Overview: The record gives the reactivity of an RNA of 177 nucleotides to 2A3 and DMS. The 2A3 profile rests on 3,019 reads. The RNA was probed in 150 mM KOAc, 10 mM MgCl2 and 150 mM bicine (pH 8.5) at 24 C. The DMS profile rests on 2,626 reads.
RNA sequence: GGGAACGACUCGAGUAGAGUCGAAAAAACAAUCCAUACUGGAGACGGAACGGAGACUUCAAAAUAAGUUUCCGAGCAGUGACUGUAUCGAAUCUAUGUAGAGCACGGAUUGGGUGCUACCCCAGACACGUAUCCAAUACUUCGGUAUUGGAUACGUAAAAGAAACAACAACAACAAC
Reactivity to 2A3 in 0.01 (KOAc 150mM, MgCl2 10mM, bicine 150mM(pH8.5), 24C), signal-to-noise 3, nucleotides 027 to 126: a000a000c020a000a040u000c010c000a030u030a060c030u070g040g000a040g020a040c030g020g040a110a040c010g020g000a000g010a010c020u030u050c130a180a160a130a190u190a100a020g000u000u000u000c000c000g000a020g010c030a030g030u140g210a070c060u050g010u100a080u130c020g040a060a010u000c020u040a090u250g060u060a050g020a040g190c060a020c100g020g030a050u070u060g020g060g060u060g030c020u050a050c000c010c000c000a000g050a020c070
Reactivity to DMS in 0.01 (KOAc 150mM, MgCl2 10mM, bicine 150mM(pH8.5), 24C), signal-to-noise 3, nucleotides 027 to 126: a060a010c050a080a040u000c000c030a150u010a030c020u030g000g000a070g010a250c060g030g020a100a160c030g000g000a020g010a010c010u000u000c250a080a080a070a090u030a030a030g000u010u000u000c000c000g000a130g030c020a030g010u000g010a110c050u000g000u000a080u000c100g010a040a130u000c030u000a050u000g040u000a060g020a110g010c190a060c150g000g000a030u000u010g010g010g020u000g010c070u000a130c070c000c010c040a110g000a100c200